[RMDB]
RNA sequence: GGGAACGACUCGAGUAGAGUCGAAAAUACCAAAAACACAGGACUCUGCAUAAGCCGCGAGGCGACGUAUAGGGUCUGACGCCUGCCCGGUGCCGGAAGGUCACGCGGAGGUGUUAGCGCGAGCGAACGGCAAACUCUUUUUCGAAAGAGUUUGCCGAAAAGAAACAACAACAACAAC
Reactivity to DMS in 0.01 (KOAc 150mM, MgCl2 10mM, bicine 150mM(pH8.5), 24C), signal-to-noise 2, nucleotides 027 to 126: u060a250c010c010a090a130a020a180a150c070a090c150a090g000g000a000c000u030c000u000g020c110a000u030a130a300g000c010c000g000c250g000a180g050g040c030g000a090c170g000u000a050u000a120g020g000g010u000c000u000g000a120c070g010c000c000u010g010c170c020c020g040g040u000g010c000c000g060g090a170a000g010g010u050c050a030c030g000c060g000g010a050g050g090u000g000u000u000a000g000c060g000c190g000a200g000c050g000a100a190
The record gives the reactivity of an RNA of 177 nucleotides to DMS.
Conditions: 150 mM KOAc, 10 mM MgCl2 and 150 mM bicine (pH 8.5), 24 C.
Source: RMDB library RFM100, as collected in RNAgym.